Chemical mapping of a 207-nucleotide RNA with 2A3 and DMS.
For 2A3 the reverse transcriptase was SuperScript II with manganese.
Source: RMDB library OK3TST, as collected in RNAgym.
For 2A3, 7,549 sequencing reads were counted.
DMS adducts were read by reverse transcription with MarathonRT.
Conditions: 150 mM KOAc, 10 mM MgCl2 and 150 mM bicine (pH 8.5), 24 C.

[RMDB]
RNA sequence: GGGAACGACUCGAGUAGAGUCGAAAAUCGCCGCGGCUGUCCAACAGUGCCAGUCCGACUUGAUCGCGUCGAUCAUGGGCAGUCGCAGUGUCACAACGGAAAACGACCUGCUGUCCGUGGAAGAACGCGCGCUGCUCGCUGAAGGGCAGCGGCUCGGCAUUUACAAACGUUUCGACGUUUGUAAAUGAAAAGAAACAACAACAACAAC
Reactivity to 2A3 in 0.01 (KOAc 150mM, MgCl2 10mM, bicine 150mM(pH8.5), 24C), signal-to-noise 6, nucleotides 027 to 156: u090c020g030c030c010g000c010g060g010c010u010g010u020c010c010a040a040c020a110g020u050g100c070c010a010g030u060c030c060g050a100c100u090u210g060a120u140c010g000c010g050u020c030g030a090u090c010a020u020g020g000g000c000a010g050u070c070g000c010a000g010u070g010u020c030a020c050a210a150c180g200g010a100a090a040a030c070g000a020c010c010u020g010c000u010g010u000c010c020g030u030g010g030a110a070g010a100a030c030g010c010g000c000g000c010u020g010c020u020c040g020c040u080g050a100a090g000g000g000c010a000g010c000g000g000c010u010c020g030g000
Reactivity to DMS in 0.01 (KOAc 150mM, MgCl2 10mM, bicine 150mM(pH8.5), 24C), signal-to-noise 4, nucleotides 027 to 156: u010c020g020c020c020g000c020g010g030c010u000g010u000c030c010a100a300c060a090g030u000g000c220c050a150g000u000c050c050g020a080c060u000u040g000a060u010c030g020c120g030u010c030g020a160u010c000a070u020g060g020g040c010a030g000u010c060g020c060a030g010u000g000u000c040a100c110a150a300c080g010g010a070a040a120a140c040g010a070c040c010u010g000c000u000g000u000c000c020g080u000g010g000a090a140g000a090a050c020g020c040g000c060g040c020u000g000c010u000c020g000c040u000g000a180a300g000g010g020c020a030g010c000g020g020c010u000c030g000g000